This 177-nucleotide RNA was probed chemically with 2A3 and DMS. For 2A3 the reverse transcriptase was SuperScript II with manganese. The DMS profile rests on 1,624 reads. Conditions: 150 mM KOAc, 10 mM MgCl2 and 150 mM bicine (pH 8.5), 24 C. The data come from the RNA Mapping Database (RMDB), library OK1LIB.

[RMDB]
RNA sequence: GGGAACGACUCGAGUAGAGUCGAAAAGACAGACGAAGCAUGCUUCCAGGCCCGGAUGCAUGCGAAAGACAGCCGAGGCCGAACGAUCUUAUCAGGCUGGAUAUGAUCGGAAAGAAAGUCUGGAAAAGGAAUUCACUAUCUUCGGAUAGUGAAUUCCAAAAGAAACAACAACAACAAC
Reactivity to 2A3 in 0.01 (KOAc 150mM, MgCl2 10mM, bicine 150mM(pH8.5), 24C), signal-to-noise 2, nucleotides 027 to 126: g100a010c000a000g000a010c010g000a080a000g000c020a040u000g000c000u000u040c000c020a070g040g010c020c000c000g000g000a020u000g000c000a000u000g000c000g000a000a000a000g050a070c010a010g040c030c010g080a110g000g050c070c000g000a030a010c030g000a000u000c030u010u030a090u030c010a010g300g000c110u080g080g000a000u000a000u030g030a050u010c000g000g050a060a060a000g100a000a060a000g000u000c000u000g060g000a090a090a000a040
Reactivity to DMS in 0.01 (KOAc 150mM, MgCl2 10mM, bicine 150mM(pH8.5), 24C), signal-to-noise 1, nucleotides 027 to 126: g000a240c000a010g000a030c030g020a110a170g010c000a020u010g000c000u000u000c000c040a090g040g000c030c050c080g000g000a030u000g000c000a020u010g000c000g010a020a080a190g010a140c080a050g040c000c050g000a130g020g000c050c010g040a190a160c020g000a000u000c000u000u010a000u010c040a120g010g000c180u010g010g020a000u000a020u000g000a050u000c000g010g000a080a120a090g000a100a000a070g000u000c000u000g000g000a080a120a020a140